This 177-nucleotide RNA was probed chemically with 2A3 and DMS. The DMS profile rests on 13,757 reads. Values cover nucleotides 27 to 126. It was measured as part of the RMDB library OK1LIB. The RNA was probed in 150 mM KOAc, 10 mM MgCl2 and 150 mM bicine (pH 8.5) at 24 C.

[RMDB]
RNA sequence: GGGAACGACUCGAGUAGAGUCGAAAAGUUGAAAUAUAAGAUGUGGGACAAUAAAUUAUUGGGCAAUAACUCGUCCCCUAUAUAUAGGUAUGCCCGUCCCUCCAGACGGGGAGAGUCUUAAUGCCGGCAUAGUUUUACGAUUCGUCGUAAAACUAUGAAAAGAAACAACAACAACAAC
Reactivity to 2A3 in 0.01 (KOAc 150mM, MgCl2 10mM, bicine 150mM(pH8.5), 24C), signal-to-noise 8, nucleotides 027 to 126: g090u110u110g070a040a110a020u210a050u080a110a100g100a190u110g070u170g080g000g050a010c040a060a140u230a180a160a100u260u150a100u100u160g070g010g010c040a040a080u050a120a030c020u010c050g140u060c030c000c000c010u030a040u010a000u010a020u070a270g100g040u070a040u150g030c020c000c000g010u010c010c000c000u040c030c020a050g020a090c050g000g020g020g010a010g020a000g020u000c030u090u140a130a050u070g020c010c000g020g020
Reactivity to DMS in 0.01 (KOAc 150mM, MgCl2 10mM, bicine 150mM(pH8.5), 24C), signal-to-noise 5, nucleotides 027 to 126: g020u010u020g000a100a060a050u030a050u010a040a080g020a060u020g010u040g000g000g010a030c020a150a080u020a060a080a130u010u010a050u020u010g010g020g000c050a040a050u000a030a030c050u010c110g000u010c010c020c000c010u000a040u020a060u010a060u010a060g020g020u020a070u010g010c010c000c000g010u000c010c030c040u020c160c120a100g000a050c100g000g000g000g000a100g000a090g000u000c060u000u010a050a050u010g000c000c010g010g000